[RMDB]
RNA sequence: GGGAACGACUCGAGUAGAGUCGAAAAAGCUCUCCACAAUCUGAUACUGUGCAGAAGAGCAUCAGCCUAGAAUCCUGAUCUUGCAAAUACAGGUGCCCAUGGCUAGAUUUGGCUGGUCUCCAUGGUGGAGUGGAAAUGACUUCGGUCAUUUCCACUCAAAAGAAACAACAACAACAAC
Reactivity to DMS in 0.01 (KOAc 150mM, MgCl2 10mM, bicine 150mM(pH8.5), 24C), signal-to-noise 1, nucleotides 027 to 126: a070g000c030u000c050u030c000c020a110c050a080a080u000c140u010g000a170u030a050c090u010g020u010g030c180a050g060a070a020g040a040g020c020a050u000c050a030g030c020c030u000a160g000a140a100u000c000c010u000g010a070u010c070u000u010g000c250a100a100a120u000a060c060a030g020g000u000g000c230c000c000a020u000g020g030c110u010a030g020a010u000u000u020g010g000c030u000g000g020u000c000u000c080c020a010u010g030g030u000g000
The record gives the reactivity of an RNA of 177 nucleotides to DMS. It was measured as part of the RMDB library OK2TRN. Values cover nucleotides 27 to 126.